An RNA of 177 nucleotides, treated with DMS and 2A3 and read out base by base. It was measured as part of the RMDB library RFM100. Values cover nucleotides 27 to 126.
RNA sequence: GGGAACGACUCGAGUAGAGUCGAAAAGAACGCCCUGCCACUUGGCAAAAUAUAAAAAUACAAUGAACUAUAUUAGUAAAUUUGAGAAAUCAAAAGGUGAAAGUUUAGUUUGUAAAUGCAUACAAAAAACACUGUUCUUUUUCGAAAGAACAGUGUUAAAAGAAACAACAACAACAAC
Reactivity to DMS in 0.01 (KOAc 150mM, MgCl2 10mM, bicine 150mM(pH8.5), 24C), signal-to-noise 1, nucleotides 027 to 126: g040a010a300c170g000c000c000c040u020g000c010c020a270c190u000u010g000g030c010a130a040a090a110u130a140u060a000a010a030a080a080u020a150c030a100a020u030g020a030a000c020u000a000u020a000u000u000a030g000u000a010a030a060u000u000u000g010a000g000a140a110a040u020c000a000a000a010a030g000g050u000g020a010a160a300g000u000u040u000a030g010u000u000u000g000u030a030a010a090u030g000c210a040u040a020c220a000a040a050a050
Reactivity to 2A3 in 0.01 (KOAc 150mM, MgCl2 10mM, bicine 150mM(pH8.5), 24C), signal-to-noise 2, nucleotides 027 to 126: g030a080a070c110g130c010c000c010u020g000c000c000a150c180u220u300g030g000c020a010a010a050a000u110a020u070a050a130a020a090a000u140a060c090a060a130u130g000a010a000c000u010a000u010a000u090u000a000g010u020a000a070a010u000u020u010g010a020g030a070a020a050u000c000a000a010a060a080g270g080u000g000a020a000a000g010u010u070u000a000g000u000u000u030g100u070a040a200a140u130g020c020a070u080a190c190a030a100a020a000